[RMDB]
RNA sequence: GGGAACGACUCGAGUAGAGUCGAAAACAGCAAAUUCGGCAACAUCCUGAACUUCCGGGGCUUCAACAAGCUGCAAGGCAGGUCGCCGUUCGACGGCGACCAGGUCUGGUGAGGUAGGCCAUGGACCCGAUCACAAUCAAUCUCGCCAUCCUGGCGGUAGUUGAUAGGUAUUCGUACCUAUCAACUAAAAAGAAACAACAACAACAAC
Reactivity to 2A3 in 0.01 (KOAc 150mM, MgCl2 10mM, bicine 150mM(pH8.5), 24C), signal-to-noise 3, nucleotides 027 to 156: c050a000g080c040a030a070a090u120u090c070g020g010c010a040a030c010a150u300c020c010u070g040a060a060c020u060u000c020c010g000g000g050g040c000u130u090c070a120a130c040a070a040g010c010u080g050c070a060a060g030g010c010a010g000g000u000c010g000c000c030g100u230u220c100g130a210c000g010g000c000g000a010c010c010a000g010g010u000c010u050g030g020u130g020a010g000g030u040a020g050g000c020c040a010u030g010g020a050c000c000c000g030a050u080c070a030c030a090a110u130c010a020a070u070c080u070c090g020c000c000a090u110c070c070u050g010g020c010g020g000
Reactivity to DMS in 0.01 (KOAc 150mM, MgCl2 10mM, bicine 150mM(pH8.5), 24C), signal-to-noise 1, nucleotides 027 to 156: c060a070g020c000a060a170a190u000u010c110g000g000c000a070a090c040a030u000c030c070u010g020a060a070c010u000u000c020c010g050g050g000g020c020u010u020c050a070a100c110a080a130g000c000u000g000c080a070a050g000g020c020a120g000g040u000c000g030c010c000g050u000u030c200g040a050c000g000g040c000g000a010c000c000a040g020g000u000c010u010g020g050u000g000a060g020g040u000a030g030g030c060c010a060u000g000g000a070c140c000c000g000a050u000c060a010c110a090a070u000c110a060a070u000c020u000c000g020c000c030a180u000c110c160u020g000g020c020g050g010

Source information:
An RNA of 207 nucleotides, treated with 2A3 and DMS and read out base by base. The data come from the RNA Mapping Database (RMDB), library OK3TST. 2A3 adducts were read by reverse transcription with SuperScript II with manganese. DMS (dimethyl sulfate) methylates the pairing face of unpaired adenines and cytosines. The 2A3 profile rests on 2,031 reads.